An RNA of 307 nucleotides, treated with 2A3 and read out base by base.
The RNA was probed in 150 mM KOAc, 10 mM MgCl2 and 150 mM bicine (pH 8.5) at 24 C.
[RMDB]
RNA sequence: GGGAACGACUCGAGUAGAGUCGAAAAGCUCCUCGGUGACGAGGAGCAAGCAUGGCCGGUGACGGCCAUGCAAGGUCGGCGUGAGCCGACCAGGUUGGCGUACGCGCCAACCAGGAUCCACUACGGUGGAUCCAGGUAAUACUUCGGUAUUACCACAAUUCACGUGAGUGAAUUGACAAGUAUUCGUGAGAAUACUUGAAGAGGACCGCUACGGCGGUCCUCAUGGCACGAUCGGGCUCGCUGCCUUUUCGUCCGAGAGCUCGAAUACCGCUCAGUUCGCUGAGCGGAAAAGAAACAACAACAACAAC
Reactivity to 2A3 in 0.01 (KOAc 150mM, MgCl2 10mM, bicine 150mM(pH8.5), 24C), signal-to-noise 1, nucleotides 027 to 266: g000c010u000c000c000u000c000g000g010u080g050a020c000g010a000g000g000a000g020c000a000a000g000c000a010u000g000g030c010c010g000g040u040g040a040c020g010g000c030c000a010u010g000c000a000a020g000g000u000c000g000g030c040g030u110g080a030g010c030c000g010a000c000c010a000g010g000u010u020g000g000c020g030u040a070c300g010c000g000c190c010a000a000c010c000a000g000g000a000u020c000c010a000c030u060a010c280g080g000u010g000g000a000u020c000c000a000g020g000u000a000a000u000a000c000u020u010c200g060g010u010a010u000u010a000c000c000a000c000a020a010u000u010c000a000c030g130u170g120a120g010u000g000a000a030u020u040g050a040c000a010a000g000u000a000u000u000c000g020u040g070a090g000a020a000u000a000c010u000u010g020a050a040g000a000g000g010a010c020c000g000c010u040a050c280g160g000c020g010g000u000c000c010u010c000a000u010g020g000c030a020c050g050a070u040c010g000g000g010c020u010c020g030c080u030g020c000c000u110u220u150u110c070g090u080c130c050g100a070g030a010g110c000u040c000g030a010a010u050a080